[RMDB]
The data come from the RNA Mapping Database (RMDB), library RFM100. This 177-nucleotide RNA was probed chemically with 2A3. The 2A3 profile rests on 597 reads. The RNA was probed in 150 mM KOAc, 10 mM MgCl2 and 150 mM bicine (pH 8.5) at 24 C. For 2A3 the reverse transcriptase was SuperScript II with manganese.

RNA sequence: GGGAACGACUCGAGUAGAGUCGAAAACCAUUCCCAUGAGUGUUGCCUGGCAAUAUUUGUGGGGAUUUUUUGAUUAUUGUUAGCAUUUUUCUAGACAAGAACAACUGAAAAAAGAGUUUCUUUUUUCGCUCAAUCAAUACUUCGGUAUUGAUUGAGCAAAAGAAACAACAACAACAAC
Reactivity to 2A3 in 0.01 (KOAc 150mM, MgCl2 10mM, bicine 150mM(pH8.5), 24C), signal-to-noise 2, nucleotides 027 to 126: c000c000a000u030u010c000c000c010a000u020g000a000g010u020g010u030u030g000c150c260u200g170g020c010a000a030u020a020u020u000u000g020u000g000g000g090g000a020u120u010u050u000u110u170g090a050u050u140a020u020u070g030u040u040a050g010c090a150u090u180u010u000u010c100u120a160g070a170c030a160a010g040a050a060c010a050a080c030u220g070a090a000a000a000a000a000g090a020g020u010u000u010c000u010u000u030u040u070u150c060